[RMDB]
Conditions: 150 mM KOAc, 10 mM MgCl2 and 150 mM bicine (pH 8.5), 24 C. This 207-nucleotide RNA was probed chemically with DMS and 2A3. For 2A3, 1,531 sequencing reads were counted.

RNA sequence: GGGAACGACUCGAGUAGAGUCGAAAAGGUUGGAUUCGUCCAACCAAAAAGCGUACUACUCGUACGCGAGCAAUGAUGUAGGGAGAACAACAUCCCAAAUAGGAUGUUGACCCUAUUGAGCUCACGAGUAUCGCAAAAACCCUGCUUCGGCAGGGAAGCGGCCACCUAACUUCGGUUAGGUGGCCGCAAAAGAAACAACAACAACAAC
Reactivity to DMS in 0.01 (KOAc 150mM, MgCl2 10mM, bicine 150mM(pH8.5), 24C), signal-to-noise 1, nucleotides 027 to 156: g020g020u000u000g010g010a060u000u010c300g020u010c010c000a030a020c000c010a000a000a070a080a180g000c040g030u010a100c090u010a030c000u000c020g000u000a180c110g000c100g000a010g050c010a100a050u010g010a080u000g010u000a010g020g010g010a180g030a140a250c010a000a040c010a020u000c000c000c020a030a140a230u000a010g010g010a010u010g010u010u000g010a140c010c000c000u000a010u010u010g000a080g000c010u010c000a110c030g040a070g020u000a080u000c000g000c020a030a090a150a170a090c020c000c010u020g000c000u000u020c080g030g030c060a130g000g000g000a000a000
Reactivity to 2A3 in 0.01 (KOAc 150mM, MgCl2 10mM, bicine 150mM(pH8.5), 24C), signal-to-noise 3, nucleotides 027 to 156: g000g000u010u010g000g000a020u010u130c190g030u090c020c040a000a040c000c060a080a000a000a000a000g020c030g020u070a060c030u010a010c000u030c020g060u050a030c210g020c080g170a000g000c020a050a300u170g040a000u080g030u020a010g000g010g040a220g070a230a040c000a000a000c000a020u040c000c000c060a120a160a130u250a110g000g000a010u010g010u080u040g210a300c000c010c000u000a000u040u020g000a000g000c000u000c020a000c000g010a010g000u010a010u300c100g000c000a030a010a000a060a080c010c010c010u030g030c010u040u040c180g120g000c000a000g000g000g000a000a010
Source: RMDB library RNAMAK, as collected in RNAgym.
The DMS profile rests on 2,613 reads.